The record gives the reactivity of an RNA of 177 nucleotides to 2A3 and DMS.
The DMS profile rests on 1,205 reads.
Source: RMDB library OK1LIB, as collected in RNAgym.
The reactions ran in a buffer of 150 mM KOAc, 10 mM MgCl2 and 150 mM bicine (pH 8.5), at 24 C.
RNA sequence: GGGAACGACUCGAGUAGAGUCGAAAAGAGCUUUCGUGAAGCUCGAUACGCUUUAUAUAUAUUCUUAGCGAUAUAUAAAUAAAUAUCACUAUAAAAAUUAGUGAUAGAGCUGAAACGUUAGCUCAAAGGGUAUAGUUAAGUUCGCUUAACUAUACCCAAAAGAAACAACAACAACAAC
Reactivity to 2A3 in 0.01 (KOAc 150mM, MgCl2 10mM, bicine 150mM(pH8.5), 24C), signal-to-noise 3, nucleotides 027 to 126: g000a000g000c000u000u000u010c010g010u020g020a030a000g000c000u000c000g000a030u050a140c040g010c020u000u180u000a020u020a000u000a000u000a080u160u130c050u130u240a060g030c010g010a000u000a000u010a010u000a060a130a060u160a020a050a030u090a060u000c000a000c000u010a040u090a150a100a170a130a190u110u010a010g000u000g010a010u010a040g000a000g000c000u010g030a090a050a020c010g010u010u010a010g010c010u000c000a040a000a000
Reactivity to DMS in 0.01 (KOAc 150mM, MgCl2 10mM, bicine 150mM(pH8.5), 24C), signal-to-noise 1, nucleotides 027 to 126: g000a020g000c000u010u010u000c000g000u020g000a210a040g040c000u000c000g000a210u070a160c240g060c200u000u000u000a090u020a000u000a000u000a000u030u010c000u040u080a280g020c010g000a000u020a000u020a060u000a050a150a010u080a000a130a210u000a050u000c000a000c000u090a000u060a060a080a270a130a150u070u010a000g010u000g000a010u000a030g000a010g020c000u000g000a100a110a010c000g000u000u000a020g000c000u000c000a100a100a080